Chemical mapping of a 177-nucleotide RNA with DMS.
RNA sequence: GGGAACGACUCGAGUAGAGUCGAAAAGGGAUCAGGGGAGCCCCCCGUGCUUCCUGCGCUUCCCGCGGCCUGUGCGGGUGGUAAGUGGCGCCGAGGCCGAGCUCAAGUGCGUGGUCCUGGGGGAGCCUAUCGAGUCGUAUUUCGAUACGACUCGAUAAAAAGAAACAACAACAACAAC
Reactivity to DMS in 0.01 (KOAc 150mM, MgCl2 10mM, bicine 150mM(pH8.5), 24C), signal-to-noise 2, nucleotides 027 to 126: g000g010g000a060u010c050a150g000g020g020g000a120g020c040c020c060c060c080c090g010u000g010c070u010u000c050c020u000g010c090g010c030u000u000c020c100c020g000c050g020g000c080c060u000g000u020g020c030g010g000g000u000g000g000u010a060a110g020u010g020g010c120g000c030c090g010a080g000g030c010c020g000a080g000c060u010c080a060a070g020u010g020c000g020u000g010g010u010c030c020u000g000g000g020g030g000a150g020c030c060
It was measured as part of the RMDB library OK2TRN.
The DMS profile rests on 2,432 reads.